[RMDB]
RNA sequence: GGGAACGACUCGAGUAGAGUCGAAAAGAUAAUGGUUGUGAACCUUCUUCUUGAAGGCCUUCUGGACGGCGGUUCGAUUCCGCCCAGGUCCACCAGAAGCACAUUGCACGGGCAGUGCGCUUCUGAUUUCAGAGAAAUACUUCGGUAUUUCUCUGAAAAAAGAAACAACAACAACAAC
Reactivity to 2A3 in 0.01 (KOAc 150mM, MgCl2 10mM, bicine 150mM(pH8.5), 24C), signal-to-noise 2, nucleotides 027 to 126: g060a010u210a110a110u220g090g010u070u040g070u030g070a050a050c000c000u010u010c010u180u020c040u070u200g010a010a010g020g000c000c030u130u070c040u040g000g020a000c010g030g000c000g010g000u060u040c030g000a030u080u040c000c000g010c000c000c000a060g020g070u010c010c010a020c020c000a050g000a000a000g000c010a000c000a010u000u010g010c060a060c300g090g300g000c020a010g000u000g010c010g000c000u010u000c000u000g040a060u020
Reactivity to DMS in 0.01 (KOAc 150mM, MgCl2 10mM, bicine 150mM(pH8.5), 24C), signal-to-noise 4, nucleotides 027 to 126: g010a040u020a080a080u040g010g000u020u000g000u000g000a110a190c000c000u010u000c020u010u040c230u000u030g030a040a040g000g020c140c070u000u020c070u000g000g000a050c040g000g030c020g010g000u000u000c190g000a300u040u020c000c010g000c000c010c300a030g000g000u000c010c030a100c300c000a000g010a010a000g010c000a020c010a000u020u000g010c000a250c300g020g000g000c000a020g000u000g010c030g000c000u000u000c000u000g000a080u010